[RMDB]
The data come from the RNA Mapping Database (RMDB), library TTRINS. The record gives the reactivity of an RNA of 177 nucleotides to DMS and 2A3.
RNA sequence: GGGAACGACUCGAGUAGAGUCGAAAAGAUAUGGAAGUACGUCGCUUGAUUAUAGACAGCAUGAAGAACUAACAUCGGAAACGAUGUUAUCCCUUCAUGCCGAAAUUGGCGACGUACUUCCUAAGUCCAUAAUGGUUUGGUUCGCCAAACCAUUAUGAAAAGAAACAACAACAACAAC
Reactivity to DMS in 0.01 (KOAc 150mM, MgCl2 10mM, bicine 150mM(pH8.5), 24C), signal-to-noise 8, nucleotides 027 to 126: g000a090u000a300u010g000g010a020a010g010u000a010c010g020u000c000g010c000u010u010g040a040u010u010a210u010a180g010a220c300a110g000c010a000u010g010a020a000g000a100a160c300u000a010a010c000a000u000c010g000g000a120a080a180c000g010a000u000g000u000u000a000u010c240c150c000u000u000c000a000u000g010c000c020g000a020a030a030u000u000g000g010c010g000a010c000g000u000a000c010u000u000c000c000u000a010a070g010u010c040
Reactivity to 2A3 in 0.01 (KOAc 150mM, MgCl2 10mM, bicine 150mM(pH8.5), 24C), signal-to-noise 2, nucleotides 027 to 126: g040a030u120a070u220g000g000a020a030g000u000a020c010g010u010c000g000c070u250u300g120a160u150u290a120u130a300g080a030c070a020g000c000a010u000g000a020a000g020a040a000c070u010a010a000c000a000u000c000g040g030a100a050a020c030g000a000u010g000u010u000a020u100c040c010c000u010u000c020a020u000g000c010c000g010a040a050a010u080u070g030g000c040g020a010c000g020u010a000c000u010u000c000c000u000a000a010g000u040c000